[RMDB]
RNA sequence: GGGAACGACUCGAGUAGAGUCGAAAAAUGCGCUAUGUCGACCCGGCGCUCAAUGGCGGCGUCAAGACGCAGACACAGGGCGACAAGGCCGGCUACGGCUGGACCGCCGAUGCCCGGCGUCUCGACAAGGCGAAGCGCGUAUUCAUCGUCGAAAGCGAAAAUACUAAGCCUUCGGGCUUAGUAUUUUAAAAGAAACAACAACAACAAC
Reactivity to DMS in 0.01 (KOAc 150mM, MgCl2 10mM, bicine 150mM(pH8.5), 24C), signal-to-noise 1, nucleotides 027 to 156: a060u000g040c050g060c010u000a110u010g000u000c010g010a120c020c080c030g020g000c010g080c000u000c040a160a160u000g060g030c030g010g010c300g030u000c000a000a070g090a040c000g070c000a230g000a040c020a000c040a160g000g040g030c000g040a150c090a080a250g020g020c000c000g030g060c100u050a090c100g070g020c000u000g020g000a190c160c000g020c030c040g000a170u000g000c020c020c000g010g010c060g020u000c000u000c010g010a060c020a090a300g000g040c020g000a130a130g020c020g050c020g000u010a080u000u000c130a110u010c050g040u000c040g000a040a070a070g030c040g010
Reactivity to 2A3 in 0.01 (KOAc 150mM, MgCl2 10mM, bicine 150mM(pH8.5), 24C), signal-to-noise 2, nucleotides 027 to 156: a000u040g010c000g020c000u040a020u300g020u010c020g010a050c040c030c040g190g000c030g020c010u060c050a210a150u090g140g000c000g020g000c000g000u000c000a010a010g020a000c010g020c030a000g170a110c140a010c050a140g010g040g000c030g040a010c010a070a070g000g000c000c020g000g040c040u030a020c200g050g020c000u030g050g050a250c030c000g030c070c050g000a070u160g020c000c000c000g000g000c000g010u000c030u010c040g030a020c020a010a060g020g030c020g020a010a010g000c020g000c000g000u030a060u040u160c080a130u140c040g080u010c010g080a110a040a000g010c020g050